Chemical mapping of a 177-nucleotide RNA with 2A3 and DMS. The RNA was probed in 150 mM KOAc, 10 mM MgCl2 and 150 mM bicine (pH 8.5) at 24 C. Source: RMDB library OK2TST, as collected in RNAgym. The DMS profile rests on 2,272 reads. Reactivities are given for positions 27 through 126. DMS adducts were read by reverse transcription with MarathonRT.

RNA sequence: GGGAACGACUCGAGUAGAGUCGAAAACAGUUGGGCUGCGGGUCCAGUUUGCAUUUGCUGGUCUGGAAGUCAAGGCAGUGUGUGUCUGCACAAGCUGUCGGCUCUGCCUGGAGGCACGCGGUAAAUGCGUAGGGGGAAGUUUCGACUUCCCCCUACGAAAAGAAACAACAACAACAAC
Reactivity to 2A3 in 0.01 (KOAc 150mM, MgCl2 10mM, bicine 150mM(pH8.5), 24C), signal-to-noise 1, nucleotides 027 to 126: c020a040g060u150u100g000g020g000c010u050g060c070g110g080g000u000c000c010a000g000u030u120u240g070c040a070u060u070u100g010c020u010g000g070u060c010u040g000g090a110a050g040u020c060a050a100g050g050c020a020g010u020g000u050g010u050g050u070c150u220g000c040a010c030a130a050g010c000u020g020u080c050g050g000c000u000c010u030g030c040c020u030g050g000a150g010g030c010a010c070g040c020g040g000u050a040a080a020u130g020
Reactivity to DMS in 0.01 (KOAc 150mM, MgCl2 10mM, bicine 150mM(pH8.5), 24C), signal-to-noise 2, nucleotides 027 to 126: c070a160g010u000u010g010g030g030c010u010g030c160g020g010g020u000c010c010a030g010u010u010u010g010c050a050u000u000u010g020c020u000g020g000u000c020u010g010g010a200a120g030u000c050a090a100g010g020c000a020g000u000g020u020g030u010g010u000c090u000g010c000a080c200a080a080g000c040u000g020u000c050g000g010c000u000c040u000g010c010c000u000g000g000a070g000g000c060a110c050g000c040g010g020u000a020a020a050u010g020